The record gives the reactivity of an RNA of 207 nucleotides to 2A3. The 2A3 profile rests on 1,731 reads. Source: RMDB library M2RFPK, as collected in RNAgym. 2A3 adducts were read by reverse transcription with SuperScript II with manganese.
RNA sequence: GGGAACGACUCGAGUAGAGUCGAAAACGGCAUUUCCCCAGCAGCCACGACCUACCAGGCUGCGGUGCGGCUCGCCGCACAGGUCAUCCCUCAUCGGGCGCGUCCUGCGUCCUUCCACGCCAACCCAAGACCAUUGCUUCCUUCGGGAAGCAAUGAACCUCAUAGUAGACUUCGGUCUACUAUGAGGAAAAGAAACAACAACAACAAC
Reactivity to 2A3 in 0.01 (KOAc 150mM, MgCl2 10mM, bicine 150mM(pH8.5), 24C), signal-to-noise 2, nucleotides 027 to 156: c040g050g010c040a060u000u030u060c010c000c000c020a040g000c000a000g010c000c020a130c160g030a020c010c020u140a200c070c060a020g010g000c010u000g000c000g000g000u020g000c000g020g010c070u120c180g110c010c010g000c000a000c000a010g010g010u010c010a060u080c030c040c020u100c040a110u090c000g010g000g000c010g000c010g040u210c060c090u100g000c000g010u000c010c000u020u020c040c020a040c050g010c000c010a040a060c020c000c020a060a020g060a040c040c000a010u000u000g000c000u000u010c000c010u010u050c050g080g000g010a000a000g010c000a000a000u000g000a000a010